[RMDB]
RNA sequence: GGGAACGACUCGAGUAGAGUCGAAAAAUGUGCGGCAAAGAAACAUUGUUUAUGCAAAGGCAAUUCGCAAUGUGUGCUCAAACAUUGCUUAUUCAAACACGCUUCACAAUGUGCGACAAAGAAACAUAAAACGUUUAGUACUUCGGUACUAAACGAACUUUGAUGUUAUCUUCGGAUAACAUCAAAGAAAAGAAACAACAACAACAAC
Reactivity to 2A3 in 0.01 (KOAc 150mM, MgCl2 10mM, bicine 150mM(pH8.5), 24C), signal-to-noise 9, nucleotides 027 to 156: a000u150g030u140g200c060g060g010c070a090a070a090g100a040a140a010c020a020u010u040g030u040u090u070a110u150g000c030a050a050a040g080g000c020a020a020u030u020c010g000c010a000a010u000g020u000g040u060g060c050u070c150a080a090a010c000a010u000u000g000c000u030u050a040u050u060c060a020a100a040c070a010c120g010c000u040u040c020a010c000a030a040u030g020u040g020c020g050a020c060a020a120a020g130a050a070a010c040a030u180a080a110a010a010c010g000u000u000u000a000g000u000a000c000u010u040c200g060g000u000a000c000u010a000a000a000c000g000a000a000
Reactivity to DMS in 0.01 (KOAc 150mM, MgCl2 10mM, bicine 150mM(pH8.5), 24C), signal-to-noise 4, nucleotides 027 to 156: a100u000g040u010g010c020g000g000c080a070a070a120g000a120a070a040c020a050u000u000g010u010u020u000a080u020g020c050a090a120a140g000g050c070a050a050u000u000c140g000c010a030a020u000g010u010g000u000g040c180u000c150a110a090a030c030a030u000u000g000c000u000u000a030u000u000c050a120a080a090c090a090c100g010c040u000u000c110a050c050a020a080u000g010u000g010c080g010a160c070a030a060a090g010a070a050a030c050a060u000a020a060a110a130c010g020u000u000u000a000g020u000a000c000u000u000c300g050g030u000a000c000u000a000a000a020c000g010a020a010
Chemical mapping of a 207-nucleotide RNA with 2A3 and DMS. Conditions: 150 mM KOAc, 10 mM MgCl2 and 150 mM bicine (pH 8.5), 24 C. It was measured as part of the RMDB library M2RFPK. The 2A3 profile rests on 9,851 reads. For 2A3 the reverse transcriptase was SuperScript II with manganese. DMS adducts were read by reverse transcription with MarathonRT.